[RMDB]
RNA sequence: GGGAACGACUCGAGUAGAGUCGAAAACAAGAAAGUACACAGGGCGUGGUUAGCACAGCGCCUACAAUCUAGUAAACACUCAACGUCUUGAAGAUGGUGGCCACAAUGAUAACAACACAACCUCCAGCACCUGCCCGUAUUUCGAUACGGGCAGGUGAAAAGAAACAACAACAACAAC
Reactivity to DMS in 0.01 (KOAc 150mM, MgCl2 10mM, bicine 150mM(pH8.5), 24C), signal-to-noise 1, nucleotides 027 to 126: c170a110a100g000a050a060a180g030u010a020c040a110c180a080g060g000g010c140g060u000g020g060u000u000a080g000c100a060c020a080g040c190g000c050c020u000a060c080a030a300u000c010u000a070g020u000a080a010a120c120a040c000u010c140a020a100c170g010u000c020u040u010g000a020a070g000a040u000g020g000u000g000g000c000c020a060c100a000a120u000g000a040u040a050a060c010a090a040c110a000c040a080a040c000c050u000c000c010a160g030